[RMDB]
RNA sequence: GGGAACGACUCGAGUAGAGUCGAAAAGAUAUGGAACCGUUCUCAUGGGAAGGUGGCAGAGAGGGAGCUCGGAAACGAGCUCCUCCCCACCUCUGUGUUACAGCCCAUGAGAGACGGUUCCUAAGUCCGUAUUAGGAUAGUUCGCUAUCCUAAUACGAAAAGAAACAACAACAACAAC
Reactivity to 2A3 in 0.01 (KOAc 150mM, MgCl2 10mM, bicine 150mM(pH8.5), 24C), signal-to-noise 4, nucleotides 027 to 126: g040a040u120a110u300g000g010a000a010c010c010g000u020u010c000u000c000a020u000g020g010g060a070a260g300g050u140g200g080c110a040g070a000g000a030g120g090g000a010g010c010u000c000g000g020a080a100a090c020g000a000g000c000u000c010c010u010c000c010c000c000a010c000c000u000c010u000g110u000g110u130u240a080c050a110g100c020c020c000a000u000g000a000g000a000g010a000c010g000g000u010u000c000c000u010a010a010g000u000c020
Reactivity to DMS in 0.01 (KOAc 150mM, MgCl2 10mM, bicine 150mM(pH8.5), 24C), signal-to-noise 4, nucleotides 027 to 126: g010a110u000a300u000g000g000a010a000c000c000g020u000u000c000u000c000a020u000g000g000g010a100a080g020g020u000g000g000c040a040g000a080g000a120g010g010g010a020g000c000u000c000g020g000a100a120a220c000g010a010g010c000u000c010c070u000c030c000c010c020a300c120c000u000c000u000g010u000g010u000u010a030c050a170g000c000c000c000a020u000g000a010g000a020g020a010c000g010g010u000u000c000c000u000a020a060g000u010c070
Structure probing data (2A3 and DMS) for a 177-nucleotide construct. The data come from the RNA Mapping Database (RMDB), library TTRINS.